Notes
This 207-nucleotide RNA was probed chemically with 2A3. Reactivities are rounded to 0.1 and cut off at 0 and 3. The RNA was probed in 150 mM KOAc, 10 mM MgCl2 and 150 mM bicine (pH 8.5) at 24 C.
[RMDB]
RNA sequence: GGGAACGACUCGAGUAGAGUCGAAAAACUUCAUCAACAUAUGGACUUGAAACAUACUUCUUACCUUUAAUUGAGUUUUUGAAAAAUUCUCUAUCUUUCACUGAAAACUUAUCACCUUUGGUAUUUUCAGCAUUACCAUUUAUAUCAACUAUUGCCACUGCUCCUAGUGAUUCGUCACUAGGAGCAGAAAAGAAACAACAACAACAAC
Reactivity to 2A3 in 0.01 (KOAc 150mM, MgCl2 10mM, bicine 150mM(pH8.5), 24C), signal-to-noise 2, nucleotides 027 to 156: a000c030u090u070c030a050u070c010a050a090c040a120u190a150u190g020g050a050c080u100u100g020a090a060a050c050a060u120a100c020u070u030c010u020u050a110c000c000u190u120u130a110a080u180u090g010a010g040u000u030u050u010u100g080a080a100a020a010a060u080u000c010u000c000u030a090u090c030u020u160u130c040a030c030u010g060a100a030a010a030c020u020u050a030u160c020a130c030c070u080u100u080g010g010u050a030u010u030u010u050c020a010g000c010a040u030u050a020c030c040a030u110u220u040a140u020a000u130c020a040a020c010u130a110u110u270g070c040c120a040